Structure probing data (DMS and 2A3) for a 177-nucleotide construct. For DMS, 2,047 sequencing reads were counted. Reactivities are given for positions 27 through 126.

[RMDB]
RNA sequence: GGGAACGACUCGAGUAGAGUCGAAAAACGUCCGACCUUGAAAUCCGCGUGAAGGUCGACCACGACAACAAGAUCCUGACCAUCCAGGACACCGGCGUGGGCAUGACUCGCGAUGACCUGGUCAAGAGAGAAUUAGAGGUUUCGACCUCUAAUUCUCAAAAGAAACAACAACAACAAC
Reactivity to DMS in 0.01 (KOAc 150mM, MgCl2 10mM, bicine 150mM(pH8.5), 24C), signal-to-noise 3, nucleotides 027 to 126: a110c200g020u000c080c010g010a040c010c010u000u010g010a050a130a080u010c050c090g050c080g020u020g030a080a040g000g000u000c010g010a060c020c030a030c030g000a080c070a030a160c230a080a100g000a180u000c000c000u000g000a170c120c140a090u000c160c000a010g000g000a030c040a040c170c120g000g000c030g020u010g010g000g000c100a080u000g010a020c020u000c020g000c030g010a070u010g000a150c030c020u000g000g010u000c020a070a110g000a210
Reactivity to 2A3 in 0.01 (KOAc 150mM, MgCl2 10mM, bicine 150mM(pH8.5), 24C), signal-to-noise 3, nucleotides 027 to 126: a000c050g100u050c020c040g000a010c000c000u040u010g020a100a070a060u070c110c080g030c040g060u090g190a190a030g050g010u010c000g000a010c000c010a010c010g080a020c020a070a010c010a110a060g060a230u000c010c000u040g060a120c040c050a110u150c010c020a000g010g020a000c000a010c020c050g000g030c010g000u010g020g030g000c060a050u220g000a010c030u000c060g000c000g040a040u030g020a040c000c010u010g000g000u010c000a060a010g130a010

For 2A3 the reverse transcriptase was SuperScript II with manganese.
For DMS the reverse transcriptase was MarathonRT.
The 2A3 profile rests on 3,063 reads.
The reactions ran in a buffer of 150 mM KOAc, 10 mM MgCl2 and 150 mM bicine (pH 8.5), at 24 C.